[RMDB]
RNA sequence: GGGAACGACUCGAGUAGAGUCGAAAAAUACUUCUCAGGAUGGCGCGUUGCAGUCCAACAAGAUCCAGGGACUGUACAGAAUUUUCCUAUACCUCGUGUCGGGUUUGGAAUCUAAGGUUGACUCGCUAAAACUUUACGUGGUUCGCCACGUAAAGAACAAACGUAACUACUUCGGUAGUUACGUUUGAAAAGAAACAACAACAACAAC
Reactivity to DMS in 0.01 (KOAc 150mM, MgCl2 10mM, bicine 150mM(pH8.5), 24C), signal-to-noise 1, nucleotides 027 to 156: a130u010a040c060u000u000c040u000c020a110g040g030a070u000g000g030c040g020c040g020u000u000g030c000a080g000u000c000c010a120a070c090a120a130g000a070u000c040c030a120g020g000g010a050c010u020g020u010a160c060a070g010a110a120u000u010u000u010c000c010u010a110u010a060c010c030u010c060g010u000g020u000c070g020g000g000u010u000u000g000g000a060a070u000c050u010a080a060g000g010u010u010g020a060c140u000c010g050c040u000a030a070a110a100c000u000u000u000a010c000g040u000g000g030u000u000c300g020c030c000a000c020g000u000a000a020a010g000a060a120
Reactivity to 2A3 in 0.01 (KOAc 150mM, MgCl2 10mM, bicine 150mM(pH8.5), 24C), signal-to-noise 2, nucleotides 027 to 156: a000u140a050c070u030u040c020u000c030a040g110g030a080u120g030g000c040g010c030g080u070u030g010c000a000g020u010c030c000a050a020c080a120a170g100a160u090c090c050a070g000g030g000a000c000u020g020u040a010c020a010g090a120a160u090u050u010u000c010c000u040a060u070a120c020c020u080c050g090u030g110u160c000g010g020g000u000u050u030g040g020a070a030u020c070u130a110a080g090g010u030u080g050a060c010u000c070g020c030u080a110a040a060a080c000u000u000u000a010c000g000u010g020g020u030u040c210g040c090c000a000c000g000u000a000a000a000g000a010a000